About this RNA:
This 177-nucleotide RNA was probed chemically with DMS. The reactions ran in a buffer of 150 mM KOAc, 10 mM MgCl2 and 150 mM bicine (pH 8.5), at 24 C. For DMS, 457 sequencing reads were counted.
RNA sequence: GGGAACGACUCGAGUAGAGUCGAAAAGAUAUGGACGUACACAAGCCCAAUUAUAUCGGAAACGAUAUAGAGGAACUACUUGAAAUACGUCCUAAGUCAAAGAAUAACGACUUCGGUCGUUAUUCAAGGUUGUGCAACUGUUCGCAGUUGCACAACCAAAAGAAACAACAACAACAAC
Reactivity to DMS in 0.01 (KOAc 150mM, MgCl2 10mM, bicine 150mM(pH8.5), 24C), signal-to-noise 1, nucleotides 027 to 126: g020a060u000a300u000g000g000a000c020g000u000a000c300a300c000a050a000g020c120c000c020a020a300u000u000a000u000a000u000c000g030g000a130a130a070c000g000a000u030a000u000a000g020a300g000g000a140a050c090u000a220c000u060u000g000a030a120a300u000a000c000g020u000c000c000u000a020a030g000u000c030a150a100a100g000a000a020u000a000a000c000g020a050c000u000u020c250g060g000u000c000g000u000u000a000u000u000c000a190a030